[RMDB]
RNA sequence: GGGAACGACUCGAGUAGAGUCGAAAAGAUAUGGAAAUGAUAUGGAGACCCUCGGAAACGAGAGGUCGUUGAAAUAUAUUUCCUAAGUCAAAAGUUCCUACGGCAAGUUCGCUUGCCGUAGGAACAAGGUAUCUUGUUUGUUCGCAAACAAGAUACCAAAAGAAACAACAACAACAAC
Reactivity to 2A3 in 0.01 (KOAc 150mM, MgCl2 10mM, bicine 150mM(pH8.5), 24C), signal-to-noise 1, nucleotides 027 to 126: g010a000u090a000u150g000g060a030a020a010u190g150a020u060a000u070g000g000a040g000a020c010c000c010u000c000g010g080a070a050a050c020g000a010g080a220g030g000u020c000g030u050u040g040a000a010a000u040a000u000a020u000u020u000c010c000u040a130a040g060u030c010a130a010a000a150g010u010u030c000c000u010a000c040g020g000c010a010a010g000u070u150c220g140c160u000u010g000c020c000g000u010a000g000g010a000a000c000a000a010
Reactivity to DMS in 0.01 (KOAc 150mM, MgCl2 10mM, bicine 150mM(pH8.5), 24C), signal-to-noise 1, nucleotides 027 to 126: g000a020u010a300u000g020g010a020a000a040u000g020a030u010a010u010g010g020a210g010a010c000c000c000u000c000g010g000a110a110a120c000g010a000g000a150g020g010u000c000g000u000u010g000a140a120a020u020a010u000a020u000u000u000c000c000u010a070a150g010u010c030a040a060a050a080g010u000u000c000c000u010a000c010g000g000c010a000a000g030u000u000c300g000c020u000u010g010c020c010g000u000a000g000g020a010a000c000a020a070